[RMDB]
RNA sequence: GGGAACGACUCGAGUAGAGUCGAAAAUUAAAGUACGUAGAAGCGGCGUGAAGCAUGUAGAAAGCUUUGCGUGCAUAUCGAGCUACAUGUGAGCGAAAGCGGUUACGUACAACGAUAUGCAAAAAAAGAAAACAAGGUAGUUCGCUACCUUGUUUUCAAAAGAAACAACAACAACAAC
Reactivity to DMS in 0.01 (KOAc 150mM, MgCl2 10mM, bicine 150mM(pH8.5), 24C), signal-to-noise 2, nucleotides 027 to 126: u010u010a010a090a170g010u000a010c010g030u000a020g010a090a080g000c040g000g000c080g060u000g000a100a200g000c000a010u000g020u000a020g010a070a140a140g010c090u010u000u010g020c170g020u010g030c030a000u000a010u000c010g000a110g010c020u000a020c010a010u000g000u000g000a200g040c020g000a040a040a100g020c030g010g010u000u000a010c000g000u000a010c000a030a100c050g000a010u010a010u000g000c000a000a000a050a090a040a070a130
Reactivity to 2A3 in 0.01 (KOAc 150mM, MgCl2 10mM, bicine 150mM(pH8.5), 24C), signal-to-noise 2, nucleotides 027 to 126: u080u020a070a000a020g020u030a020c000g010u020a000g010a160a030g190c020g220g000c050g040u050g030a040a000g000c000a010u020g010u010a020g110a140a140a020g050c070u050u070u160g100c110g080u050g000c000a000u030a020u030c020g020a030g020c020u020a020c000a020u050g090u160g020a030g000c040g070a090a060a040g010c000g000g000u030u030a000c000g000u000a010c010a010a000c000g020a010u020a010u100g000c040a000a010a000a000a010a060a080